[RMDB]
RNA sequence: GGGAACGACUCGAGUAGAGUCGAAAAGAUCGCGCCGGAUCGAGAGGCGCGGUACAUCGCAGCGGCCCUGGCCGGUACGCGCUGGAUCAUGCGCAGGCCACGAUCGAUCCGAUCAGCGCAGGCGCGGUACAUGCAGCGACUUCGGUCGCUGCAUGUAAAAAGAAACAACAACAACAAC
Reactivity to DMS in 0.01 (KOAc 150mM, MgCl2 10mM, bicine 150mM(pH8.5), 24C), signal-to-noise 1, nucleotides 027 to 126: g030a020u000c000g010c020g000c000c000g020g000a060u000c110g000a090g020a100g000g020c010g000c020g110g000u000a010c090a100u000c150g040c040a100g000c010g000g000c010c020c150u000g030g020c010c010g010g030u000a040c120g020c010g010c010u000g000g020a090u020c110a070u010g010c010g020c040a150g000g000c040c090a130c140g000a050u000c010g010a050u020c090c030g010a030u020c120a190g020c000g050c030a080g000g000c020g000c010g030g010